Chemical mapping of a 177-nucleotide RNA with 2A3 and DMS. It was measured as part of the RMDB library M2PK50. For 2A3, 12,319 sequencing reads were counted. The reactions ran in a buffer of 150 mM KOAc, 10 mM MgCl2 and 150 mM bicine (pH 8.5), at 24 C.

RNA sequence: GGGAACGACUCGAGUAGAGUCGAAAAAAGUGAUUAUUCGUAAUCACUUCACGCCGGGCGCGGUGGCGCGUGCCUGUAGUCCCAGGUACUCGGGAGGCUAAACGACGUACCCGUUCGCGGGUACGAAACUAAUGUCUUCUUUCGAGAAGACAUUAGUAAAAGAAACAACAACAACAAC
Reactivity to 2A3 in 0.01 (KOAc 150mM, MgCl2 10mM, bicine 150mM(pH8.5), 24C), signal-to-noise 4, nucleotides 027 to 126: a000a000g010u010g000a010u010u020a010u020u110c190g040u070a010a000u000c000a000c000u030u030c080a060c080g070c040c010g010g000g010c030g000c020g010g030u020g030g040c050g000c010g020u020g010c010c000u020g040u060a030g050u000c020c010c010a020g080g060u070a110c040u040c080g030g010g010a040g070g000c040u070a090a080a020c050g110a020c010g010u000a000c000c020c000g020u030u050c270g000c010g070g000g000u000a000c000g000a010a000
Reactivity to DMS in 0.01 (KOAc 150mM, MgCl2 10mM, bicine 150mM(pH8.5), 24C), signal-to-noise 7, nucleotides 027 to 126: a010a000g010u000g000a000u000u000a010u000u010c170g020u000a010a010u000c000a000c000u000u000c070a120c120g000c070c020g010g000g010c030g020c020g010g010u000g000g000c080g000c040g010u000g010c000c000u000g010u010a070g010u000c020c020c010a110g000g010u000a070c080u000c070g010g000g010a080g010g010c060u010a030a070a090c150g010a190c020g010u000a000c000c000c000g010u000u010c170g000c010g000g000g010u000a000c000g000a020a060